About this RNA
This 177-nucleotide RNA was probed chemically with DMS and 2A3. The RNA was probed in 150 mM KOAc, 10 mM MgCl2 and 150 mM bicine (pH 8.5) at 24 C. 2A3 adducts were read by reverse transcription with SuperScript II with manganese. Values cover nucleotides 27 to 126. The data come from the RNA Mapping Database (RMDB), library OK1LIB.

RNA sequence: GGGAACGACUCGAGUAGAGUCGAAAACUCAUUUUACGCAGACAUGACGGUCGAUAGAGGUUUGUACCAGCUGAUGCAUUUACAACCGUGCACAGUGAUAAAUGUUAACUGAUUAUUCCUGUCAUGUAAUACAACCCGUCUUCGGACGGGUUGUAUUAAAAGAAACAACAACAACAAC
Reactivity to DMS in 0.01 (KOAc 150mM, MgCl2 10mM, bicine 150mM(pH8.5), 24C), signal-to-noise 2, nucleotides 027 to 126: c050u000c100a120u030u000u020u100a120c190g040c210a120g000a110c010a000u000g010a010c000g000g000u040c240g010a100u000a090g030a300g020g000u000u000u020g070u000a020c240c190a280g070c020u000g000a060u000g000c000a050u000u000u030a050c300a080a050c130c130g010u010g030c000a060c030a000g000u000g000a120u000a050a060a050u020g000u000u000a020a030c000u000g000a170u000u020a030u020u010c180c000u000g000u000c000a000u020g020u000
Reactivity to 2A3 in 0.01 (KOAc 150mM, MgCl2 10mM, bicine 150mM(pH8.5), 24C), signal-to-noise 3, nucleotides 027 to 126: c000u040c020a070u000u170u150u160a160c170g060c100a070g030a110c040a020u010g010a000c010g000g040u110c050g010a020u050a010g160a010g000g030u030u080u090g030u100a060c000c020a030g000c000u050g050a300u000g040c000a010u000u000u180a150c170a240a010c070c060g020u000g000c010a000c010a030g000u000g030a050u190a170a040a020u120g000u230u120a020a000c040u040g040a090u080u160a020u090u000c000c010u010g040u020c000a020u030g050u040